Conditions: 150 mM KOAc, 10 mM MgCl2 and 150 mM bicine (pH 8.5), 24 C. An RNA of 177 nucleotides, treated with 2A3 and DMS and read out base by base. Reactivities are given for positions 27 through 126. DMS adducts were read by reverse transcription with MarathonRT. The DMS profile rests on 12,575 reads.
RNA sequence: GGGAACGACUCGAGUAGAGUCGAAAAGCUGCCUCUGACGUCCUUCUCCCCCGGAAACGGGGCCGAAGGGUGGUAACGCGAGUCGCCUGGCGCUCGCACGGGUAUGCGUGGGGGUCGACCCUGGCCGACGCUAGGAUAAUUUCGAUUAUCCUAGCGUAAAAGAAACAACAACAACAAC
Reactivity to 2A3 in 0.01 (KOAc 150mM, MgCl2 10mM, bicine 150mM(pH8.5), 24C), signal-to-noise 5, nucleotides 027 to 126: g000c010u010g010c000c010u060c110u080g080a030c010g020u010c000c000u000u010c010u040c000c000c000c000c000g000g000a000a020a010c020g000g000g010g000c010c010g000a010a000g010g000g000u020g040g040u090a100a030c080g020c010g020a020g140u270c040g030c080c220u100g110g040c030g000c010u020c010g020c020a010c020g030g000g020u100a060u300g030c040g020u130g030g030g010g000g000u070c040g020a130c000c010c020u040g060g020c020c030g020
Reactivity to DMS in 0.01 (KOAc 150mM, MgCl2 10mM, bicine 150mM(pH8.5), 24C), signal-to-noise 7, nucleotides 027 to 126: g010c020u000g010c010c000u000c100u000g010a120c030g010u000c000c000u000u000c000u010c300c010c000c000c000g000g000a070a070a190c010g020g000g010g020c060c060g000a010a010g010g010g010u000g010g010u010a080a100c140g000c020g000a030g010u010c040g030c020c100u010g020g020c020g020c010u000c020g010c020a070c120g000g000g010u010a020u010g010c010g010u000g010g010g000g000g010u000c060g010a140c020c010c010u000g010g020c050c050g010